Background: Chemical mapping of a 207-nucleotide RNA with DMS and 2A3. The 2A3 profile rests on 1,847 reads.
[RMDB]
RNA sequence: GGGAACGACUCGAGUAGAGUCGAAAAGCGAUACUCGCCUGAGCCUCGUUUUUUGUCCCGCUAGUCGAGCGGACAACCCGAGCACCGCCGAAGGCCCUUUUUUCUUUUAGCUGCUUGGUGGUGCGGUGAGGGUGGAAAUCACCGCGUAUCUCCUAAACUAAUUUCGCUAGUUCGCUAGCGAAAUUAGAAAAGAAACAACAACAACAAC
Reactivity to DMS in 0.01 (KOAc 150mM, MgCl2 10mM, bicine 150mM(pH8.5), 24C), signal-to-noise 1, nucleotides 027 to 156: g030c020g000a130u000a020c020u000c010g010c140c200u000g010a050g030c020c020u010c020g030u000u000u000u000u010u020g020u000c020c020c010g010c030u020a050g020u010c110g010a110g040c030g020g060a180c060a080a060c010c020c010g000a150g030c010a040c010c000g080c000c020g010a070a300g000g000c110c030c040u000u000u000u000u000u000c090u040u010u010u000a050g020c000u000g000c130u030u000g030g000u000g010g040u020g020c000g000g030u020g020a160g010g040g030u020g030g000a030a080a130u020c030a140c010c010g040c070g030u020a120u000c060u000c010c030u000a070a030a300
Reactivity to 2A3 in 0.01 (KOAc 150mM, MgCl2 10mM, bicine 150mM(pH8.5), 24C), signal-to-noise 3, nucleotides 027 to 156: g000c010g010a050u040a070c020u020c030g150c080c160u160g000a020g020c030c040u000c030g010u010u010u010u010u050u140g080u070c110c110c040g000c030u080a100g140u200c100g100a010g000c010g010g000a020c020a050a040c010c030c000g030a010g000c010a010c020c020g020c020c010g080a000a020g060g000c040c010c030u010u040u030u030u100u160c060u080u170u020u060a020g000c030u070g020c050u060u070g000g000u010g000g000u020g000c010g000g000u040g040a020g010g040g020u070g030g060a070a150a030u150c050a030c010c010g000c020g040u050a120u050c090u060c020c010u040a060a060a070

For DMS, 2,262 sequencing reads were counted. Reactivities are given for positions 27 through 156. The reactions ran in a buffer of 150 mM KOAc, 10 mM MgCl2 and 150 mM bicine (pH 8.5), at 24 C. Values are in units of 0.01, from 0 to 300, in steps of 10.